[RMDB]
An RNA of 177 nucleotides, treated with DMS and 2A3 and read out base by base. Values cover nucleotides 27 to 126. The reactions ran in a buffer of 150 mM KOAc, 10 mM MgCl2 and 150 mM bicine (pH 8.5), at 24 C.
RNA sequence: GGGAACGACUCGAGUAGAGUCGAAAAGAUCAGGUCGAAACUGCUUUGUGGUUUACCGUCGAGUUCAGUCACCACACCAUUAACAAUCUUGAUGGAAGGUUUCGGAUCGUUAGGGCUUUCCAUGGCAACAUCCGUCGAAUUUCGAUUCGACGGAUGUAAAAGAAACAACAACAACAAC
Reactivity to DMS in 0.01 (KOAc 150mM, MgCl2 10mM, bicine 150mM(pH8.5), 24C), signal-to-noise 3, nucleotides 027 to 126: g010a070u000c020a090g030g020u000c060g030a040a060a050c060u000g010c150u000u000u000g030u010g000g000u000u000u000a110c060c020g000u000c130g000a120g030u010u000c060a050g000u000c300a050c000c010a070c070a150c030c060a030u000u010a030a060c150a070a110u010c190u000u020g010a000u000g020g010a180a110g010g000u000u000u020c020g010g010a050u000c130g010u010u000a060g000g000g000c090u000u000u000c020c010a090u010g010g010c060a050
Reactivity to 2A3 in 0.01 (KOAc 150mM, MgCl2 10mM, bicine 150mM(pH8.5), 24C), signal-to-noise 2, nucleotides 027 to 126: g040a060u120c060a030g010g040u040c030g010a040a060a000c020u030g050c080u140u090u110g050u080g000g060u040u040u080a070c030c030g120u100c030g020a010g060u060u130c070a000g090u070c000a010c010c010a000c000a010c060c020a050u070u080a040a030c060a120a120u150c070u080u090g020a010u020g020g080a060a090g100g080u000u060u160c060g030g000a050u050c040g000u090u140a060g060g000g000c000u040u020u030c000c040a040u080g080g010c020a050